[RMDB]
About this RNA
An RNA of 177 nucleotides, treated with 2A3 and DMS and read out base by base. DMS adducts were read by reverse transcription with MarathonRT. Source: RMDB library OK1LIB, as collected in RNAgym.
RNA sequence: GGGAACGACUCGAGUAGAGUCGAAAACUCAAAAUAACGCUGCGUCGCGACGGAUGUGGCAACAGACACCGAAGUGCAAACGGUAGAGAAAGCGAGCGCAAUCUCAAGCGUUACGUACGAGAAGAGAAUUUAUAUUUAUAUUCGUAUAAAUAUAAAUAAAAGAAACAACAACAACAAC
Reactivity to 2A3 in 0.01 (KOAc 150mM, MgCl2 10mM, bicine 150mM(pH8.5), 24C), signal-to-noise 3, nucleotides 027 to 126: c020u020c000a020a040a020a120u200a100a030c020g020c040u040g010c000g050u060c010g010c040g100a050c040g040g040a100u050g030u030g130g030c050a060a030c050a070g100a040c030a000c030c020g080a120a020g030u090g070c030a110a020a030c010g010g040u120a040g020a000g020a080a080a000g030c050g060a050g080c070g000c030a050a090u010c030u030c050a050a010g010c010g010u010u040a030c060g000u020a020c040g030a030g050a200a030g050a000g050a020
Reactivity to DMS in 0.01 (KOAc 150mM, MgCl2 10mM, bicine 150mM(pH8.5), 24C), signal-to-noise 1, nucleotides 027 to 126: c050u000c050a080a090a070a100u020a040a070c120g000c040u010g040c010g020u000c030g020c100g000a160c120g000g000a140u000g010u000g010g040c050a160a100c190a060g000a060c060a020c020c030g010a090a150g000u000g060c040a070a080a060c010g030g000u010a050g000a040g010a090a050a300g010c070g000a040g020c110g010c000a060a180u010c010u060c080a070a040g000c030g000u010u000a030c050g050u000a030c100g020a110g010a050a080g010a060g010a080